[RMDB]
RNA sequence: GGGAACGACUCGAGUAGAGUCGAAAAUCAUCACAUGAAUAACAGCGAAAAACAUGUGGAUGCGGCGGAAAAAGGUUAUGGCUUCACGGGUAUUUAUAAUUUCGACGGAUUUUAUGGCGUCGCUGGCCAUUAUUUGGACGUUCGCGUCCAAAUAAUGAAAAGAAACAACAACAACAAC
Reactivity to DMS in 0.01 (KOAc 150mM, MgCl2 10mM, bicine 150mM(pH8.5), 24C), signal-to-noise 4, nucleotides 027 to 126: u020c040a090u010c030a030c020a030u000g010a100a080u010a100a110c090a060g030c050g000a050a100a100a110a170c030a020u000g010u000g000g010a040u000g010c090g000g000c020g000g020a020a080a050a090a050g000g010u000u010a040u000g010g010c040u000u000c100a060c090g000g010g010u000a040u000u000u000a050u010a070a110u000u000u010c030g020a060c090g010g000a050u010u010u000u000a050u000g010g010c020g010u000c020g020c040u010g020g000c080
Reactivity to 2A3 in 0.01 (KOAc 150mM, MgCl2 10mM, bicine 150mM(pH8.5), 24C), signal-to-noise 2, nucleotides 027 to 126: u090c020a020u070c000a000c000a020u030g050a050a070u180a240a040c060a050g120c040g040a080a010a020a030a000c020a020u030g000u010g040g020a000u040g050c000g040g050c000g020g000a050a100a060a000a030g060g020u090u090a030u080g050g030c030u060u030c040a010c040g020g040g010u040a050u050u200u020a110u040a090a110u050u090u050c010g020a030c060g010g040a030u050u070u080u100a100u230g020g000c020g000u020c020g030c010u020g000g000c000